Background:
Conditions: 150 mM KOAc, 10 mM MgCl2 and 150 mM bicine (pH 8.5), 24 C. Chemical mapping of a 177-nucleotide RNA with DMS and 2A3.

RNA sequence: GGGAACGACUCGAGUAGAGUCGAAAAGAUGGCGGUCGGCUCAAUCUUCCAACGCCUCUCGGAGCAUCAAGUUUUAGAGAAUCCGGUCUCGCCACGCAUGACCGAUUGCCCGAAUCGGGACAUGCAAAUAUAGGUUCCUAUUCGUAGGAACCUAUAUAAAAGAAACAACAACAACAAC
Reactivity to DMS in 0.01 (KOAc 150mM, MgCl2 10mM, bicine 150mM(pH8.5), 24C), signal-to-noise 7, nucleotides 027 to 126: g010a100u000g010g020c020g020g000u010c040g000g020c090u000c060a100a110u000c050u000u010c080c060a080a120c100g010c050c010u000c050u000c100g010g020a060g010c100a100u010c120a060a070g010u000u010u010u010a120g000a060g010a150a120u010c030c020g010g000u000c020u010c030g010c040c060a080c250g010c010a010u000g000a210c000c000g010a020u000u000g010c010c000c010g000a070a020u000c000g000g000g000a100c000a000u000g020c010a110a110
Reactivity to 2A3 in 0.01 (KOAc 150mM, MgCl2 10mM, bicine 150mM(pH8.5), 24C), signal-to-noise 4, nucleotides 027 to 126: g070a000u090g010g010c020g010g050u040c020g020g000c010u040c080a030a100u010c040u080u030c050c030a060a040c050g030c050c000u040c030u060c060g140g030a040g030c030a060u110c090a090a100g030u040u070u140u210a060g010a000g020a070a050u040c000c020g040g050u010c110u060c070g000c010c000a050c040g000c010a000u000g000a000c000c010g000a000u000u040g030c010c010c010g040a000a010u000c000g000g010g040a060c010a000u010g000c000a000a060
The 2A3 profile rests on 6,911 reads. DMS adducts were read by reverse transcription with MarathonRT. For DMS, 9,714 sequencing reads were counted.